The data come from the RNA Mapping Database (RMDB), library RNAMAK. Structure probing data (2A3 and DMS) for a 207-nucleotide construct. The reactions ran in a buffer of 150 mM KOAc, 10 mM MgCl2 and 150 mM bicine (pH 8.5), at 24 C. Reactivities are given for positions 27 through 156. The DMS profile rests on 5,272 reads.
RNA sequence: GGGAACGACUCGAGUAGAGUCGAAAACAGUGCUAGUUCGCUAGCACUGAAAAAGCGUACUACUGGGCGCUAAUUCCUUGGACCUCUCCCAAAUAGGAGAGCUAGGAAUAGCGAACUACCCAGUAUCGCAAAAAACGAGUUACUUCGGUAACUCGAAACUAUGGUAACUCUUCGGAGUUACCAUAGUAAAAGAAACAACAACAACAAC
Reactivity to 2A3 in 0.01 (KOAc 150mM, MgCl2 10mM, bicine 150mM(pH8.5), 24C), signal-to-noise 4, nucleotides 027 to 156: c010a000g010u020g000c010u010a000g050u060u080c220g030c240u020a010g000c030a000c000u000g000a030a000a000a000a000g020c020g040u100a080c050u010a010c000u010g010g000g010c010g010c010u020a050a300u000u000c010c000u020u060g200g050a280c020c000u020c000u030c000c020c020a150a300a180u210a070g000g000a000g000a000g000c010u040a000g000g000a000a000u000a010g010c010g050a110a040c110u150a090c100c000c000a000g000u000a000u000c040g000c000a060a100a000a060a000a100c000g010a010g000u000u000a000c010u030u200c290g070g000u020a000a000c000u000c000g010a030a000
Reactivity to DMS in 0.01 (KOAc 150mM, MgCl2 10mM, bicine 150mM(pH8.5), 24C), signal-to-noise 2, nucleotides 027 to 156: c030a000g010u010g000c000u000a000g030u010u010c300g060c010u000a020g020c000a020c010u010g000a010a030a070a130a130g010c020g000u000a090c160u000a000c000u010g000g000g000c000g000c000u000a030a060u000u000c000c000u000u000g070g000a090c290c010u000c000u000c010c000c010a070a190a240u010a060g010g020a010g030a020g030c010u000a020g010g000a020a040u000a030g020c020g010a110a120c040u010a260c000c010c000a050g020u000a000u010c000g000c000a000a070a060a060a080a110c020g020a010g000u000u000a010c000u000u000c300g050g010u000a000a010c000u000c000g010a000a060